[RMDB]
Source: RMDB library OK3TST, as collected in RNAgym.
The record gives the reactivity of an RNA of 207 nucleotides to DMS and 2A3.
The DMS profile rests on 3,951 reads.
RNA sequence: GGGAACGACUCGAGUAGAGUCGAAAAGUAAUCUGUGUCACAAUUCAGUCAGUUGACAGUUGCCUGUCAGACUGAGCAUUCGUUAAAAAAAUUCGCAUGGUGAAUCCCCCUGUGCGGAGGGGCGACUGGUGUAUAAGGUGUCAUCUCUGACGACAAAGGUGACUAUUUUAUUCGUAAAAUAGUCACCAAAAGAAACAACAACAACAAC
Reactivity to DMS in 0.01 (KOAc 150mM, MgCl2 10mM, bicine 150mM(pH8.5), 24C), signal-to-noise 2, nucleotides 027 to 156: g030u020a060a050u000c040u030g020u000g020u000c060a150c050a050a160u010u000c020a050g020u020c000a090g020u000u000g020a010c010a050g020u000u000g010c210c000u000g020u000c020a150g010a020c020u010g000a130g010c020a100u000u000c060g040u010u000a020a000a070a160a080a110a160u000u000c000g010c030a020u000g000g050u010g000a110a180u000c070c010c030c070c010u000g010u000g010c000g030g020a050g020g000g020g040c050g000a080c030u000g000g000u000g010u000a070u000a020a100g010g020u000g010u000c030a060u000c050u000c080u020g010a070c060g010a090c090a060a120a230
Reactivity to 2A3 in 0.01 (KOAc 150mM, MgCl2 10mM, bicine 150mM(pH8.5), 24C), signal-to-noise 2, nucleotides 027 to 156: g050u050a020a150u050c040u050g090u040g060u050c030a020c040a150a080u120u050c000a040g040u010c000a050g040u080u060g020a010c010a010g040u180u200g140c020c010u000g000u000c020a020g010a050c000u010g010a010g000c000a030u050u100c060g030u030u060a070a080a030a000a020a010a100u090u010c000g010c000a010u030g040g000u090g030a100a110u070c000c010c000c000c010u000g010u010g020c000g040g010a040g000g010g000g000c010g000a020c020u030g030g000u140g020u040a050u030a180a010g050g000u020g040u010c040a090u030c040u000c020u070g030a010c020g040a020c030a010a070a010
For 2A3, 1,524 sequencing reads were counted.